[RMDB]
RNA sequence: GGGAACGACUCGAGUAGAGUCGAAAAGAUAUGGAUCAUAUGAACAGUUCGGACUAUGGGAGAUCGGAGGUCGGAAACGACCUCGAUCGACGAUCAUAGGUCCGAACUGUUCAUAUGAUCCUAAGUCGCCAUUAUAAGUGUUCGCACUUAUAAUGGCAAAAGAAACAACAACAACAAC
Reactivity to DMS in 0.01 (KOAc 150mM, MgCl2 10mM, bicine 150mM(pH8.5), 24C), signal-to-noise 2, nucleotides 027 to 126: g010a110u000a300u010g010g010a020u000c000a010u000a000u000g000a020a020c000a000g040u010u020c000g000g020a150c010u000a010u000g000g000g010a030g000a020u000c000g050g020a030g030g020u000c010g000g020a110a110a300c000g000a010c000c000u000c000g000a020u000c000g000a030c300g000a040u000c010a000u000a010g000g010u000c000c000g010a000a000c010u000g010u000u000c010a000u000a000u010g000a000u010c020c000u000a000a080g010u000c140